[RMDB]
RNA sequence: GGGAACGACUCGAGUAGAGUCGAAAAUCAAUACCUUUCGAGGUAUUGAAAAAAAGAUAUGGACGGUGUCCGGGUCGAGGAUCUAGGAUCGGAAACGAUCCUAGGGAGACCGACAUACCGUCCUAAGUCAAAAAAUGGCAGUAUUCGUACUGCCAAACCUAAGUUCAACUUUCGAGUUGAACUUAGGAAAAGAAACAACAACAACAAC
Reactivity to 2A3 in 0.01 (KOAc 150mM, MgCl2 10mM, bicine 150mM(pH8.5), 24C), signal-to-noise 2, nucleotides 027 to 156: u020c000a020a000u000a000c000c010u010u070u210c280g130a010g010g000u010a010u000u010g020a050a000a000a010a000a000a000g020a000u040a000u030g000g010a000c010g020g000u030g020u070c200c260g130g020g020u020c030g010a280g010g000a000u000c000u020a000g000g000a000u000c010g000g000a000a010a000c010g010a000u000c000c020u000a000g000g000g000a000g000a010c000c000g020a000c000a030u160a030c010c020g000u000c000c000u010a000a000g000u000c000a020a000a020a050a030a100u040g000g000c000a010g000u010a030u050u130c140g050u060a090c000u000g000c000c010a000a000a000
An RNA of 207 nucleotides, treated with 2A3 and read out base by base. The RNA was probed in 150 mM KOAc, 10 mM MgCl2 and 150 mM bicine (pH 8.5) at 24 C.